[RMDB]
RNA sequence: GGGAACGACUCGAGUAGAGUCGAAAACUGGAUUCUUUCGAGAAUCCAGCAUGACUAGUCGCUAGCGAACGAUCAACGCUAGCGACUAGACUUUAUUGAUCGCAUUUGCCUCUUUCGAGAGGCAAAAACUCCUAGAGAAAUUCGUUUCUCUAGGAGUAAAAGAAACAACAACAACAAC
Reactivity to 2A3 in 0.01 (KOAc 150mM, MgCl2 10mM, bicine 150mM(pH8.5), 24C), signal-to-noise 2, nucleotides 027 to 126: c010u010g000g000a000u010u010c030u020u120u150c170g110a000g010a010a000u000c000c000a000g020c000a030u110g040a010c020u000a030g000u020c000g020c000u010a000g000c010g060a120a060c020g040a050u040c040a040a060c020g000c000u010a010g060c000g000a000c010u000a010g000a000c000u020u030u080a060u020u060g030a020u090c030g010c150a090u000u000u070g000c000c010u020c000u040u070u090c140g060a010g000a010g000g000c000a000a010a010a000
Reactivity to DMS in 0.01 (KOAc 150mM, MgCl2 10mM, bicine 150mM(pH8.5), 24C), signal-to-noise 5, nucleotides 027 to 126: c010u000g000g000a000u010u000c000u000u000u010c160g010a030g000a010a000u000c000c010a010g000c060a070u010g000a300c030u000a010g000u000c000g000c000u010a000g000c000g010a090a080c050g010a040u000c040a120a070c010g000c000u000a010g000c000g010a000c000u000a010g010a050c150u010u010u000a040u000u000g010a030u010c030g020c300a150u010u000u000g000c000c000u000c000u010u000u010c160g010a020g000a020g010g000c000a000a000a020a110